[RMDB]
RNA sequence: GGGAACGACUCGAGUAGAGUCGAAAAGUCAUGCACUUUCGAGUGCAUGACAAAAAAGAUAUGGACUGUGUAAGACAUGAACUCAUUCGGAAACGAAUGGUGUUCAACAGCUUACCAGUCCUAAGUCAAAAAAGUAACGCUGUUCGCAGCGUUACAAACGGAUCAUGGUAUUCGUACCAUGAUCCGUAAAAGAAACAACAACAACAAC
Reactivity to 2A3 in 0.01 (KOAc 150mM, MgCl2 10mM, bicine 150mM(pH8.5), 24C), signal-to-noise 2, nucleotides 027 to 156: g020u000c000a000u010g020c000a000c010u080u060u160c300g170a020g000u000g010c030a000u000g000a000c010a000a000a000a000a000a000g010a000u020a010u010g000g000a000c000u000g040u010g000u240a010a000g020a040c150a300u300g000a030a000c000u000c020a000u000u000c000g000g010a000a000a000c010g020a000a000u000g050g020u180g020u030u000c010a070a020c070a020g000c000u000u000a000c000c000a000g000u000c000c000u000a000a000g000u000c000a040a050a000a040a060a040g000u040a000a000c000g000c000u010g050u040u040c200g010c140a000g000c000g020u000u010a000c000a000a010